[RMDB]
RNA sequence: GGGAACGACUCGAGUAGAGUCGAAAACCAACCUCCCCUGAGGUAACCUCCGAAACUCUACGGGGAUAGCUUCUCUCCUCCUGCCUGUGGGAAAGAGAGAAGCGAAACUCAAACACAGGCUAAGCAUGUAGAUGCCCUACUGCUUAGGCUCUUGUCGCCUGCCUAUAUCCUUCGGGAUAUAGGCAGGAAAAGAAACAACAACAACAAC
Reactivity to 2A3 in 0.01 (KOAc 150mM, MgCl2 10mM, bicine 150mM(pH8.5), 24C), signal-to-noise 1, nucleotides 027 to 156: c020c010a040a110c030c080u040c000c000c000c000u010g010a010g010g080u120a070a060c030c030u250c020c020g140a150a130a090c060u050c020u100a050c240g000g000g000g010a000u030a000g000c000u000u000c000u000c000u000c000c000u010c000c010u000g010c000c000u000g000u030g000g000g000a000a020a000g000a000g000a020g000a000a000g000c000g020a000a000a000c040u060c210a000a000a000c000a010c000a000g030g000c000u000a000a000g000c000a000u290g000u000a030g040a160u180g100c130c020c000u000a010c000u010g000c000u000u000a020g020g030c050u000c060u140u150g130u180c070g060
Structure probing data (2A3) for a 207-nucleotide construct.